[RMDB]
RNA sequence: GGGAACGACUCGAGUAGAGUCGAAAAGCAUAAUGUAAUCACCUCAUAUCAUUGUCCAGUGAAUUCAGUGAGGCACCCUUCUAAGUUCCUUGUUGCUUGACAUGUGGUAUGCACUCUCUUAUUAUCAGAAGCUGAGCAUAUUCGUAUGCUCAGCUUCAAAAGAAACAACAACAACAAC
Reactivity to 2A3 in 0.01 (KOAc 150mM, MgCl2 10mM, bicine 150mM(pH8.5), 24C), signal-to-noise 1, nucleotides 027 to 126: g030c060a040u130a140a070u280g060u180a050a040u060c020a050c050c080u030c000a030u070a030u120c000a010u000u070g020u000c010c080a030g050u050g090a030a120u170u140c040a020g080u030g130a010g020g000c010a020c000c030c000u240u090c120u220a120a020g030u030u040c000c010u000u020g060u030u140g090c030u030u060g080a000c010a060u040g020u040g010g000u060a000u060g050c030a030c080u020c040u030c020u130u070a120u150u080a160u170c060a000
Reactivity to DMS in 0.01 (KOAc 150mM, MgCl2 10mM, bicine 150mM(pH8.5), 24C), signal-to-noise 1, nucleotides 027 to 126: g020c050a060u000a040a070u000g010u000a080a080u000c090a070c030c020u000c050a110u000a090u000c020a020u000u000g040u010c050c070a090g010u010g010a040a100u010u000c090a080g020u020g000a050g000g020c070a070c030c020c050u000u010c090u000a120a120g000u000u000c030c020u000u000g000u000u000g000c030u020u000g000a050c110a050u010g020u000g000g000u010a040u000g020c100a060c050u000c020u000c050u000u010a070u000u020a090u020c120a130
Chemical mapping of a 177-nucleotide RNA with 2A3 and DMS.
Values cover nucleotides 27 to 126.
For DMS the reverse transcriptase was MarathonRT.
For 2A3 the reverse transcriptase was SuperScript II with manganese.